[RMDB]
RNA sequence: GGGAACGACUCGAGUAGAGUCGAAAACAGAAAAGCAGGCUGAAUCGUGAAGCAUAUAUUAAAGACAUUAUGAAGUACUCUAAGCCAAUUGUUAUUGGAGACGUUGACAUCACAGCAUUUGAGAGAGCAUAUAGUGCGGAUUCGUCCGCACUAUAUGAAAAGAAACAACAACAACAAC
Reactivity to 2A3 in 0.01 (KOAc 150mM, MgCl2 10mM, bicine 150mM(pH8.5), 24C), signal-to-noise 7, nucleotides 027 to 126: c040a010g160a060a110a000a020g090c050a030g050g000c000u030g040a090a100u130c100g070u080g080a030a020g030c070a010u060a020u030a030u110u260a130a100a010g080a020c030a040u020u120a070u250g080a070a040g040u110a090c040u020c010u070a020a080g060c010c010a070a050u100u150g150u200u160a100u050u060g010g010a040g030a030c050g040u040u060g030a040c040a060u070c020a030c030a030g040c040a080u020u130u210g110a140g000a020g000a000g030
Reactivity to DMS in 0.01 (KOAc 150mM, MgCl2 10mM, bicine 150mM(pH8.5), 24C), signal-to-noise 7, nucleotides 027 to 126: c060a130g010a090a050a090a110g030c130a060g020g020c030u000g010a090a050u010c090g000u010g000a090a090g000c050a040u020a040u010a060u020u030a060a090a110g010a110c110a040u010u010a050u030g000a060a060g020u010a070c020u000c040u010a080a110g010c020c040a060a060u000u020g010u010u010a070u000u010g000g000a090g010a080c100g020u000u000g010a090c060a060u010c050a050c110a040g010c080a050u010u010u010g000a110g010a100g000a080g010

Notes:
The data come from the RNA Mapping Database (RMDB), library OK1LIB. Structure probing data (2A3 and DMS) for a 177-nucleotide construct. For 2A3, 3,869 sequencing reads were counted. The reactions ran in a buffer of 150 mM KOAc, 10 mM MgCl2 and 150 mM bicine (pH 8.5), at 24 C. Reactivities are given for positions 27 through 126. The DMS profile rests on 15,495 reads. DMS adducts were read by reverse transcription with MarathonRT.